Structure probing data (DMS and 2A3) for a 207-nucleotide construct.
As a SHAPE reagent, 2A3 marks flexible, mostly unpaired nucleotides at the ribose 2'-OH.
The DMS profile rests on 2,940 reads.
DMS adducts were read by reverse transcription with MarathonRT.
The reactions ran in a buffer of 150 mM KOAc, 10 mM MgCl2 and 150 mM bicine (pH 8.5), at 24 C.
RNA sequence: GGGAACGACUCGAGUAGAGUCGAAAACGCGGGGAGAUUAAAUACAUCUUCCAGGUGAUGGCCCUAACCACUGGCGUUAACGUUCCGUUUUGGGAUUUUUCGGUGAUAUUGCGCAAGAUCGGGUCGCUUACGUUGCUUAUUCAGCUUUUGGGGCGUGCCCCUCUAGUGAGUUCGCUCACUAGAGGGGAAAAGAAACAACAACAACAAC
Reactivity to DMS in 0.01 (KOAc 150mM, MgCl2 10mM, bicine 150mM(pH8.5), 24C), signal-to-noise 1, nucleotides 027 to 156: c050g000c040g000g050g050g000a020g010a040u000u000a070a110a130u000a080c240a060u000c010u010u010c020c000a060g000g020u020g000a170u010g010g000c010c000c020u000a100a110c020c100a070c040u000g000g010c050g070u000u010a080a090c030g020u000u010c020c020g040u000u000u000u000g030g040g000a130u000u000u000u000u000c040g030g000u010g000a080u010a080u010u000g010c030g000c070a060a060g010a070u000c060g030g000g000u000c050g040c040u000u000a050c130g010u000u000g000c020u000u010a150u000u000c030a200g030c040u000u000u000u000g030g010g040g010c030g020u000g000
Reactivity to 2A3 in 0.01 (KOAc 150mM, MgCl2 10mM, bicine 150mM(pH8.5), 24C), signal-to-noise 2, nucleotides 027 to 156: c080g000c030g000g020g020g000a040g010a010u100u150a070a150a160u220a080c080a040u000c000u040u010c030c010a010g010g060u060g010a100u140g010g000c000c000c010u010a030a030c030c000a050c100u050g050g020c010g010u040u050a070a010c050g030u060u030c040c020g000u000u020u080u250g060g010g070a120u060u020u020u040u080c010g020g000u080g060a060u020a030u120u120g000c050g010c030a030a040g050a100u070c050g010g010g040u000c010g000c020u040u090a040c040g030u060u050g040c000u120u080a090u250u190c150a010g040c000u050u050u140u210g030g020g000g000c030g000u020g010